[RMDB]
The record gives the reactivity of an RNA of 177 nucleotides to DMS. It was measured as part of the RMDB library M2PK50. Reactivities are given for positions 27 through 126. Conditions: 150 mM KOAc, 10 mM MgCl2 and 150 mM bicine (pH 8.5), 24 C.
RNA sequence: GGGAACGACUCGAGUAGAGUCGAAAACUUUUCAACUUCGGUUGAAAAGAACCUGCGCGCUGCACGCAGUUAAGUCUAACUCCUCCUCUGAGUCAUCGGGCGUUAUAUAAUCAUUCGUGAUUAUAAACUACUCCCGUUAAUUCGUUAACGGGAGUAGAAAAGAAACAACAACAACAAC
Reactivity to DMS in 0.01 (KOAc 150mM, MgCl2 10mM, bicine 150mM(pH8.5), 24C), signal-to-noise 2, nucleotides 027 to 126: c010u000u000u000u000c000a000a000c000u000u020c140g020g020u000u000g000a000a000a000a000g000a180a130c120c000u000g000c020g010c060g000c090u000g010c080a070c030g010c060a050g000u020u000a080a110g000u010c060u010a110a140c040u000c020c010u020c070c030u010c020u000g010a120g010u010c030a080u000c080g010g010g020c120g020u000u000a100u000a020u000a020a010u000c000a030u000u000c120g020u000g010a010u000u000a000u000a030a080a210